[RMDB]
RNA sequence: GGGAACGACUCGAGUAGAGUCGAAAAACAGUCAGUACGCUGACUGAGGGAAACGGGAGCCGGGCUUGGGACAAGAGCCAUCCCAAGUCCAAGGCCAAGUAGGCUCUAGAGAUGGUACGCCAUCACAAAAACUGGUCUACCUUCGGGUAGACCAGAACAUCUUAUACGUCUUCGGACGUAUAAGAUGAAAAGAAACAACAACAACAAC
Reactivity to 2A3 in 0.01 (KOAc 150mM, MgCl2 10mM, bicine 150mM(pH8.5), 24C), signal-to-noise 5, nucleotides 027 to 156: a000c000a000g000u010c000a000g000u030a050c220g030c130u000g010a000c000u010g010a070g020g040g020a080a160a120c130g050g020g040a070g020c030c030g000g000g000c000u000u000g000g000g010a000c020a090a070g000a010g020c000c000a010u010c010c000c000a000a000g000u000c000c010a050a020g010g000c030c010a080a010g050u120a120g070g000c000u010c010u020a060g020a000g000a070u010g000g020u050a020c220g040c020c000a010u030c020a010c060a070a100a030a010a010c000u000g000g000u000c000u000a000c010c000u030u070c180g030g000g000u000a000g010a000c010c000a000g000a000a000
Reactivity to DMS in 0.01 (KOAc 150mM, MgCl2 10mM, bicine 150mM(pH8.5), 24C), signal-to-noise 1, nucleotides 027 to 156: a140c030a010g000u000c000a020g000u000a090c210g030c030u020g000a020c000u000g000a160g000g040g000a060a180a110c050g000g000g000a170g050c080c060g020g040g040c000u110u010g020g040g030a040c050a040a070g010a200g050c060c080a300u000c010c000c000a070a090g000u000c010c000a070a030g060g000c050c090a040a180g050u000a170g020g040c010u000c000u040a130g000a180g030a070u000g000g040u000a190c130g030c000c020a030u000c030a110c040a080a070a060a140a150c040u000g020g000u000c030u000a040c000c010u000u000c300g040g080g040u000a000g010a000c020c000a010g000a040a110
An RNA of 207 nucleotides, treated with 2A3 and DMS and read out base by base. 2A3 is a SHAPE reagent: it acylates the 2'-hydroxyl of flexible nucleotides of all four kinds. The 2A3 profile rests on 6,647 reads. 2A3 adducts were read by reverse transcription with SuperScript II with manganese. Values cover nucleotides 27 to 156. Conditions: 150 mM KOAc, 10 mM MgCl2 and 150 mM bicine (pH 8.5), 24 C. It was measured as part of the RMDB library M2RFPK.